[RMDB]
RNA sequence: GGGAACGACUCGAGUAGAGUCGAAAAGAUAAAGAGGAGACUGCUGGACUCGCCGCCCAAGUUCGAGCAUGGGCCAAUUCCGAGCGAAGAACUCCGCGGGGGAAGGAUCAGCGCCCGAGAGGGGUCAGUGGUAAAGAGCAUUGGAACGCCGAGGAGGGUAAUAGUGUUAGUUCGCUAACACUAUUACAAAAGAAACAACAACAACAAC
Reactivity to 2A3 in 0.01 (KOAc 150mM, MgCl2 10mM, bicine 150mM(pH8.5), 24C), signal-to-noise 2, nucleotides 027 to 156: g040a000u240a070a150a040g040a060g040g020a030g010a070c080u070g010c010u020g020g030a050c010u020c050g060c030c010g090c040c010c010a040a020g040u070u100c060g060a040g030c040a060u110g030g000g080c080c060a030a040u210u000c060c030g000a000g030c020g040a110a040g020a050a030c030u050c070c100g040c040g000g010g000g000g010a070a000g010g010a080u090c020a000g060c030g060c010c000c040g100a110g020a030g050g010g020g000u040c040a040g020u040g040g020u070a100a100a010g050a000g030c040a030u020u040g000g020a080a070c050g040c060c030g060a020g000g020a020g000g070
This 207-nucleotide RNA was probed chemically with 2A3. The reactions ran in a buffer of 150 mM KOAc, 10 mM MgCl2 and 150 mM bicine (pH 8.5), at 24 C. Reactivities are given for positions 27 through 156. It was measured as part of the RMDB library VIROID.